Chemical mapping of a 207-nucleotide RNA with 2A3 and DMS. For 2A3, 5,191 sequencing reads were counted. Reactivities are given for positions 27 through 156.

[RMDB]
RNA sequence: GGGAACGACUCGAGUAGAGUCGAAAAUGAGGGAGACUGAGCCUGUCUUCCACAGUGUCACGGAAGUGAGCACUAAACAAAUACUCCCAGGCAUGGAUCAUUACAAAUGGAGGUGAGUGCUGGACAGGAAAGGACAGGAUGCUAGGCGAGAAUUCAGGAGAAUACAUAGUUUCGACUAUGUAUUCUCAAAAGAAACAACAACAACAAC
Reactivity to 2A3 in 0.01 (KOAc 150mM, MgCl2 10mM, bicine 150mM(pH8.5), 24C), signal-to-noise 5, nucleotides 027 to 156: u200g020a090g000g020g000a020g010a000c030u060g020a030g090c020c040u010g000u010c010u040u000c000c000a020c030a030g030u030g020u020c010a020c030g070g110a140a080g030u030g030a050g070c010a010c030u080a070a060a000c060a020a070a030u120a080c040u030c000c010c000a020g040g010c020a020u050g030g010a040u090c060a090u100u190a120c090a120a080a050u110g050g010a020g010g030u060g030a070g020u030g040c030u030g010g020a030c040a040g020g030a030a040a030g020g010a020c040a020g010g020a000u040g010c040u040a030g030g020c030g020a050g050a080a100u150u100c050a080g000
Reactivity to DMS in 0.01 (KOAc 150mM, MgCl2 10mM, bicine 150mM(pH8.5), 24C), signal-to-noise 3, nucleotides 027 to 156: u010g010a140g000g000g000a060g010a060c030u010g010a190g020c080c030u000g020u000c010u000u000c010c010a080c150a090g010u000g000u000c000a050c030g040g030a140a130g020u010g030a120g000c030a090c010u000a100a060a070c090a070a090a110u010a090c090u000c000c010c010a120g020g040c050a080u000g010g010a080u010c080a090u000u000a150c120a040a090a080u000g020g020a050g010g000u000g010a080g020u010g030c050u000g000g000a100c080a070g040g010a060a080a110g000g020a060c050a050g000g030a060u000g000c040u010a090g020g050c040g010a100g010a070a090u000u000c040a150g030
The reactions ran in a buffer of 150 mM KOAc, 10 mM MgCl2 and 150 mM bicine (pH 8.5), at 24 C.